[RMDB]
RNA sequence: GGGAACGACUCGAGUAGAGUCGAAAAACUUCACUGAUAAUUGUGCUUUCUCCUUAUCUAGCUACGGAUACGAAUGGCACUUUACUGAUCACUUGGCUAUUGGAUACUUGCACUUUACCUAACAAGAAGUACCAGUGGAGUUCGCUCCACUGGUACUAAAAGAAACAACAACAACAAC
Reactivity to 2A3 in 0.01 (KOAc 150mM, MgCl2 10mM, bicine 150mM(pH8.5), 24C), signal-to-noise 2, nucleotides 027 to 126: a000c070u180u100c040a050c080u040g050a090u070a240a030u090u070g000u010g000c000u060u060u000c010u030c020c010u040u180a080u190c050u040a040g080c020u040a010c080g080g000a080u050a050c040g070a070a090u090g020g010c050a000c000u000u020u050a080c010u050g050a040u050c010a010c170u020u050g050g010c020u040a050u080u070g000g000a040u050a110c030u070u030g010c010a010c000u090u040u060a040c000c010u010a110a050c030a070a030g160a120
Reactivity to DMS in 0.01 (KOAc 150mM, MgCl2 10mM, bicine 150mM(pH8.5), 24C), signal-to-noise 2, nucleotides 027 to 126: a080c130u010u010c030a090c060u000g010a100u010a080a050u010u000g000u000g020c050u000u000u000c090u000c030c050u040u000a050u000c110u020a090g020c060u000a050c080g000g010a020u000a040c210g000a040a120u010g010g000c000a030c080u000u000u000a100c100u020g000a100u000c080a040c040u000u000g010g000c070u000a040u010u010g020g000a090u000a100c090u000u000g010c030a020c120u000u000u000a020c040c000u060a060a040c250a070a040g000a120